[RMDB]
RNA sequence: GGGAACGACUCGAGUAGAGUCGAAAAGAUAUGGAUGCCCAUGCAGCAACAGCGUGCAUCGGAAACGAUGCACGACAUGCUGACAUGAGGCAUCCUAAGUCAAAAGCUCCCUGUUCGCAGGGAGCAAGUUAAUCAGCUAGUUCGCUAGCUGAUUAACAAAAGAAACAACAACAACAAC
Reactivity to DMS in 0.01 (KOAc 150mM, MgCl2 10mM, bicine 150mM(pH8.5), 24C), signal-to-noise 8, nucleotides 027 to 126: g010a060u010a300u010g010g010a010u000g000c000c000c000a020u000g000c010a010g010c000a040a100c300a230g010c010g030u000g000c000a010u010c000g010g010a130a120a220c000g010a010u000g010c000a010c000g010a020c110a170u000g000c000u000g000a150c000a010u000g000a140g010g010c000a000u000c000c000u000a010a070g010u010c040a090a110a140a140g010c000u000c000c000c000u000g020u010u010c220g030c000a010g000g010g010a000g010c000a000a010
Reactivity to 2A3 in 0.01 (KOAc 150mM, MgCl2 10mM, bicine 150mM(pH8.5), 24C), signal-to-noise 4, nucleotides 027 to 126: g040a030u090a030u150g010g000a000u010g000c000c000c010a010u010g000c010a010g010c000a010a170c020a200g090c010g000u010g000c000a010u000c010g010g040a050a080a030c020g010a010u000g010c000a000c000g000a010c000a020u050g000c010u010g030a060c000a000u060g040a300g000g000c000a000u000c000c000u000a000a000g010u000c030a020a030a010a200g000c000u000c000c000c000u000g040u040u120c300g000c100a000g000g000g000a000g000c000a010a000
Structure probing data (DMS and 2A3) for a 177-nucleotide construct. The DMS profile rests on 14,340 reads. The data come from the RNA Mapping Database (RMDB), library TTRDES. For DMS the reverse transcriptase was MarathonRT. For 2A3 the reverse transcriptase was SuperScript II with manganese.